[RMDB]
RNA sequence: GGGAACGACUCGAGUAGAGUCGAAAAGAUAUGGAUCGUACGCGAGGUCGAUGAGCGUGACAUCGGAAACGAUGUACGCGAGACCUCACGAUCCUAAGUCAAAACAUUCAGCCUUCGGGCUGAAUGACCUUACCCAACAGUUCGCUGUUGGGUAAGGAAAAGAAACAACAACAACAAC
Reactivity to 2A3 in 0.01 (KOAc 150mM, MgCl2 10mM, bicine 150mM(pH8.5), 24C), signal-to-noise 5, nucleotides 027 to 126: g000a000u010a010u040g010g010a000u000c010g020u070a120c300g060c110g300a010g000g000u030c030g070a300u300g000a030g000c010g010u050g230a110c000a010u000c010g010g000a000a000a000c000g000a010u000g000u010a000c010g000c000g010a020g000a000c000c000u000c000a000c000g000a000u030c000c000u000a000a000g000u000c000a000a050a080a120c010a000u000u000c000a000g000c010c020u090u210c300g140g000g000c010u000g000a000a000u000g000a000
Reactivity to DMS in 0.01 (KOAc 150mM, MgCl2 10mM, bicine 150mM(pH8.5), 24C), signal-to-noise 4, nucleotides 027 to 126: g010a010u000a020u000g000g000a010u000c010g020u010a150c300g030c300g020a010g020g020u000c000g020a170u030g000a040g000c010g010u000g010a040c000a010u010c000g010g000a000a000a020c010g010a010u000g000u000a010c000g010c000g010a000g010a000c000c000u000c000a010c000g000a000u000c000c000u010a000a110g000u000c000a150a080a160a240c010a010u000u000c000a000g010c000c000u000u020c270g030g010g020c000u000g010a000a000u000g010a090
Chemical mapping of a 177-nucleotide RNA with 2A3 and DMS. 2A3 adducts were read by reverse transcription with SuperScript II with manganese. The RNA was probed in 150 mM KOAc, 10 mM MgCl2 and 150 mM bicine (pH 8.5) at 24 C. Values are in units of 0.01, from 0 to 300, in steps of 10. DMS adducts were read by reverse transcription with MarathonRT. Values cover nucleotides 27 to 126.